[RMDB]
RNA sequence: GGGAACGACUCGAGUAGAGUCGAAAAGGUGAGCCUUGCAACAGCACGCUGAUGGGCUGGGCAAGGGGGCCGCAAGGCUUCCAGGCUGCAAGGGAAUUCACAUCAGCUGGUCUGGCGCCGGGUACCUUGGCGUUGGGCGAGAUCCAAGGGUGCUGGCCACCAUACAUUAGUUCGCUAAUGUAUGGUGAAAAGAAACAACAACAACAAC
Reactivity to 2A3 in 0.01 (KOAc 150mM, MgCl2 10mM, bicine 150mM(pH8.5), 24C), signal-to-noise 3, nucleotides 027 to 156: g110g020u080g040a020g050c010c010u010u010g030c050a140a130c000a070g000c000a000c070g030c030u060g010a070u110g000g040g000c010u000g000g000g000c030a050a080g000g000g000g010g000c000c030g020c070a070a090g000g000c000u040u020c010c000a030g080g040c020u050g040c070a030a030g040g030g070a040a090u220u180c060a040c000a090u050c010a000g000c010u050g020g030u020c010u020g030g000c000g000c000c000g000g010g020u070a060c010c000u010u030g010g000c030g020u030u020g030g000g010c030g010a020g010a010u100c120c050a030a030g030g010g000u030g000c010u020g040g010c040
Reactivity to DMS in 0.01 (KOAc 150mM, MgCl2 10mM, bicine 150mM(pH8.5), 24C), signal-to-noise 1, nucleotides 027 to 156: g010g000u010g010a110g010c000c020u000u020g000c000a060a060c000a050g050c020a060c030g000c070u040g000a090u010g000g000g030c010u000g000g010g000c010a080a130g010g020g000g020g060c000c020g050c210a140a180g050g000c010u000u000c000c000a180g010g010c010u010g010c020a050a080g010g000g010a040a100u010u000c090a130c030a110u000c010a050g020c040u000g030g010u010c010u010g030g000c070g010c030c010g000g000g010u000a080c110c030u020u010g010g020c030g020u010u000g000g040g000c010g000a140g010a300u000c040c020a120a130g030g010g010u000g010c010u000g000g000c100
Chemical mapping of a 207-nucleotide RNA with 2A3 and DMS. For DMS the reverse transcriptase was MarathonRT. The 2A3 profile rests on 4,414 reads. Source: RMDB library ARCHII, as collected in RNAgym.